An RNA of 170 nucleotides, treated with 2A3 and DMS and read out base by base.
DMS adducts were read by reverse transcription with MarathonRT.
It was measured as part of the RMDB library 15KLIB.
DMS (dimethyl sulfate) methylates the pairing face of unpaired adenines and cytosines.
For 2A3, 44,097 sequencing reads were counted.
2A3 is a SHAPE reagent: it acylates the 2'-hydroxyl of flexible nucleotides of all four kinds.

RNA sequence: GGGAACGACUCGAGUAGAGUCGAAAACGAACAGAAGGGCUCCUCCUCCUCGGGAGUAGGCCCGUAGCGAUGGGGAGGGAUGCUAGGAGUUGGGGGAGACCGAAGCGAGGAGGAAAGCAAAGAAAGCACGGGUAUGAGUUCGCUCAUACCAAAAGAAACAACAACAACAAC
Reactivity to 2A3 in 0.01 (KOAc 150mM, MgCl2 10mM, bicine 150mM(pH8.5), 24C), signal-to-noise 9, nucleotides 027 to 129: c040g040a040a010c040a060g100a110a100g050g010g010c010u020c020c000u020c000c000u020c020c020u050c050g020g020g010a020g020u070a030g040g060c000c000c000g000u010a000g010c060g060a080u120g000g000g000g010a030g010g010g010a060u080g020c020u040a030g010g040a050g030u110u090g000g010g000g000g000a020g020a000c000c000g010a010a010g050c030g010a020g000g000a000g000g020a030a010a010g020c050a040a040a020g080a060a050a000g080c060a030c130g040
Reactivity to DMS in 0.01 (KOAc 150mM, MgCl2 10mM, bicine 150mM(pH8.5), 24C), signal-to-noise 9, nucleotides 027 to 129: c070g020a100a080c060a060g020a100a110g000g010g040c050u000c150c020u000c030c020u000c060c020u000c060g020g010g010a090g030u030a080g000g030c010c010c010g000u010a030g030c090g020a080u050g020g020g030g000a070g000g000g020a080u000g020c070u000a060g040g020a100g050u000u000g010g010g000g000g010a030g000a050c040c020g000a090a030g010c110g000a060g000g000a040g040g000a040a050a070g000c070a050a050a070g040a080a060a070g000c110a100c190g010